[RMDB]
RNA sequence: GGGAACGACUCGAGUAGAGUCGAAAAGCGUACUACAAACGCGAUGCUGAAGCAACAGCUUACUAGUACUCCCAAAUAGGAGGACCGUAAGACAUGCUUCAGGGCAGCGUUUGUAUCGCAAAACAGAAACACACUCCUUCGGGAGUGUGUUUCUGAAGACUUAUCAUCCCUUCGGGGAUGAUAAGUCAAAAGAAACAACAACAACAAC
Reactivity to 2A3 in 0.01 (KOAc 150mM, MgCl2 10mM, bicine 150mM(pH8.5), 24C), signal-to-noise 2, nucleotides 027 to 156: g030c010g080u140a090c050u000a000c060a000a010a000c000g000c020g030a060u130g090c030u030g010a010a010g000c000a030a080c020a140g050c030u000u000a000c010u030a020g030u000a010c000u070c000c020c010a300a270a060u240a240g000g000a000g000g000a000c000c000g000u010a010a000g030a050c010a090u030g010c010u000u000c010a000g050g050g000c080a000g000c000g000u000u030u000g010u010a010u190c020g030c000a020a020a020a020c000a000g000a010a000a000c000a000c000a000c000u000c000c020u090u150c300g030g000g000a000g010u000g000u010g000u000u000u000c000u000g000a000a010

This 207-nucleotide RNA was probed chemically with 2A3. Source: RMDB library RNAMAK, as collected in RNAgym. For 2A3, 1,304 sequencing reads were counted.